[RMDB]
RNA sequence: GGGAACGACUCGAGUAGAGUCGAAAAUACCGCAGGCCUGCGGUGCGGCAGUGUGGAGACCUGCCGUAAGCCGUGUUGUUUUGACAACCGGGAGAAAGCGUAUGCGGAGCCAGCGCUUUCAGGGUCUAAAAGUAUGGGAUCUUCGGAUCCCAUACAACCAUGAGUCUACCUUCGGGUAGACUCAUGGAAAAGAAACAACAACAACAAC
Reactivity to 2A3 in 0.01 (KOAc 150mM, MgCl2 10mM, bicine 150mM(pH8.5), 24C), signal-to-noise 1, nucleotides 027 to 156: u120a020c000c010g010c000a000g000g000c000c000u000g000c000g000g000u000g000c000g000g000c010a020g010u020g030u080g290g050a050g010a110c000c000u010g000c000c000g000u000a010a010g020c000c010g120u130g040u160u000g000u000u150u140u300g090a000c000a010a000c000c000g000g020g000a000g000a010a000a000g000c000g000u040a300u180g040c130g120g040a000g090c090c000a010g000c000g000c000u000u010u000c000a020g000g000g000u010c010u000a000a000a000a240g010u000a010u000g000g000g000a000u000c010u030u010c190g080g010a000u000c000c000c000a000u000a000c000a000a000
Chemical mapping of a 207-nucleotide RNA with 2A3. It was measured as part of the RMDB library M2RFPK. For 2A3 the reverse transcriptase was SuperScript II with manganese. Values cover nucleotides 27 to 156.